[RMDB]
Conditions: 150 mM KOAc, 10 mM MgCl2 and 150 mM bicine (pH 8.5), 24 C.
Chemical mapping of a 207-nucleotide RNA with 2A3.
RNA sequence: GGGAACGACUCGAGUAGAGUCGAAAAGCCAUGUUGAUAAACUACUUACAUUACGGCGAUAUGGUAAGUAUACCUAUCGUUCGAUGCAUGUUAGAUAACGGAGCGACCAUGGAUAAGACAACGGACAACAACUAUCCUCUCACGACUACUUUGUUAACCCCGAUAUAUCGUUCGCGAUAUAUCGGGGAAAAGAAACAACAACAACAAC
Reactivity to 2A3 in 0.01 (KOAc 150mM, MgCl2 10mM, bicine 150mM(pH8.5), 24C), signal-to-noise 3, nucleotides 027 to 156: g120c000c020a040u040g010u010u050g120a150u070a110a170a070c040u130a020c010u040u040a000c000a060u100u070a060c030g000g010c020g000a000u000a030u250g030g030u080a140a030g150u030a110u080a190c000c000u000a000u010c000g020u080u300c070g020a020u030g050c070a000u000g030u060u040a010g000a120u070a120a050c030g090g000a010g020c020g050a030c030c020a040u080g000g000a060u020a080a080g030a030c030a030a090c170g020g080a000c020a070a000c010a010a000c070u040a050u020c000c000u030c000u000c000a040c080g040a010c050u150a010c000u060u110u030g090u090u070a020a020
The data come from the RNA Mapping Database (RMDB), library OK3TST.
For 2A3, 964 sequencing reads were counted.